[RMDB]
RNA sequence: GGGAACGACUCGAGUAGAGUCGAAAAGUAAAUAAAGCGCACCAAGAUGGAGGUGCGCAACCAGCGUGUCCAUGGAUCACGCAUCCACGCGUCUACCAAGACGCGAAUGGUAUUACAAAUAAAAAAACCCUAUAAGCAGGUUCGCCUGCUUAUAGGGAAAAGAAACAACAACAACAAC
Reactivity to 2A3 in 0.01 (KOAc 150mM, MgCl2 10mM, bicine 150mM(pH8.5), 24C), signal-to-noise 2, nucleotides 027 to 126: g020u050a020a040a100u160a060a160a020g000c020g000c010a010c010c000a010a070g120a110u190g150g020a060g090g000u000g000c000g010c010a000a000c030c000a020g010c010g010u020g010u050c090c040a120u180g110g020a070u140c000a000c000g020c030a040u050c020c000a010c010g010c000g000u000c000u020a120c040c050a050a020g000a000c010g000c000g010a020a020u050g010g000u010a000u010u020a050c020a020a120a020u140a180a110a090a000a000a040a060
Reactivity to DMS in 0.01 (KOAc 150mM, MgCl2 10mM, bicine 150mM(pH8.5), 24C), signal-to-noise 1, nucleotides 027 to 126: g000u020a120a030a100u050a040a160a170g000c000g020c000a000c010c020a060a080g060a120u010g020g000a190g010g040u000g010c000g040c000a040a010c010c000a030g000c060g010u000g020u000c010c060a230u020g020g000a100u010c010a000c060g040c000a090u000c020c070a120c000g000c000g020u000c010u000a190c300c290a050a020g010a000c000g000c000g020a000a030u000g010g000u000a070u010u000a070c070a040a160a050u020a000a000a100a060a060a020a220
Structure probing data (2A3 and DMS) for a 177-nucleotide construct. For DMS, 742 sequencing reads were counted. Source: RMDB library M2PK90, as collected in RNAgym. For 2A3 the reverse transcriptase was SuperScript II with manganese.